Source: RMDB libraries RFM100 and RFMREP, as collected in RNAgym. The record gives the reactivity of an RNA of 177 nucleotides to 2A3 and DMS. High DMS reactivity at an A or C suggests that its Watson-Crick edge is free. DMS adducts were read by reverse transcription with MarathonRT.
RNA sequence: GGGAACGACUCGAGUAGAGUCGAAAACGGCGUUGAUGGGUUAUCACUCGUAAUCUUCUGCUUGCAGGAGGCCCGUUCUUCAGGCAUCUGUCUGUUGAACAACCCCGCGUUCCUCACGGUUCGCACCAAUUAGAAUAGCAUUCGUGCUAUUCUAAUUAAAAGAAACAACAACAACAAC
Reactivity to 2A3 in 0.01 (KOAc 150mM, MgCl2 10mM, bicine 150mM(pH8.5), 24C), signal-to-noise 9, nucleotides 027 to 126: c010g030g030c070g040u060u100g060a110u120g030g050g040u090u120a110u130c020a020c050u040c030g050u060a070a120u010c020u050u010c010u020g020c030u050u140g020c020a020g000g040a020g020g020c000c020c020g000u010u000c000u010u010c000a010g010g000c010a160u090c260u190g010u000c000u000g010u000u010g010a010a010c010a010a030c010c010c010c030g010c010g020u010u010c010c010u080c030a050c050g030g000u040u060c020g000c030a040c030c020
Reactivity to DMS in 0.01 (KOAc 150mM, MgCl2 10mM, bicine 150mM(pH8.5), 24C), signal-to-noise 9, nucleotides 027 to 126: c040g000g000c190g010u010u020g010a040u010g010g010g010u010u010a130u010c060a050c030u000c040g010u010a080a150u020c020u000u000c010u000g010c020u020u000g020c050a030g000g010a060g010g010c040c030c060g000u000u000c010u000u000c010a010g000g010c010a180u030c230u030g020u000c000u000g010u000u000g010a030a060c040a100a150c040c020c020c130g020c020g010u000u000c010c000u000c150a130c200g010g000u000u000c060g000c090a110c100c100